[RMDB]
RNA sequence: GGGAACGACUCGAGUAGAGUCGAAAAGGCUCAAACAAAAAGUAAAUGCGAAUAACAUCGUUAACUUUGCUCGUAAGGAUGCUCUAGUAGCUGCCUAAACACCUCUUAUAGGUUCGAGCGUCUUUAGUUUGACUCCGUUAAGGACUGAAGACCAAACGAAUGCAUGUAUGUUCGCAUACAUGCAUUCAAAAGAAACAACAACAACAAC
Reactivity to DMS in 0.01 (KOAc 150mM, MgCl2 10mM, bicine 150mM(pH8.5), 24C), signal-to-noise 3, nucleotides 027 to 156: g010g030c070u000c010a080a060a090c060a040a070a070a030a110g030u000a050a040a010u000g010c020g000a220a170u000a110a070c170a080u000c040g010u010u000a070a040c080u000u000u000g000c000u000c050g020u010a040a040g030g010a070u000g010c010u010c070u010a110g030u000a070g030c040u000g040c050c030u000a060a050a050c030a030c020c000u010c040u010u010a070u020a070g020g000u000u000c050g000a080g020c050g010u010c000u000u000u000a060g030u000u000u010g000a190c100u000c040c090g020u000u020a120a260g000g000a060c010u000g010a020a040g010a060c040c070a030a070a110c200
Reactivity to 2A3 in 0.01 (KOAc 150mM, MgCl2 10mM, bicine 150mM(pH8.5), 24C), signal-to-noise 7, nucleotides 027 to 156: g050g000c030u040c050a050a060a080c040a030a110a040a010a000g030u070a040a130a070u140g010c020g000a040a040u100a120a050c040a080u020c010g030u060u040a040a050c040u060u070u110g000c010u010c020g050u060a030a020g020g000a010u040g000c000u020c030u050a100g050u140a010g050c030u080g050c010c000u030a030a060a010c060a030c040c020u070c070u180u170a140u150a250g020g000u030u050c030g010a010g010c020g020u000c010u000u030u020a020g010u010u010u070g050a060c030u010c050c030g050u070u150a090a050g010g010a020c020u030g030a030a000g020a030c040c010a060a020a020c080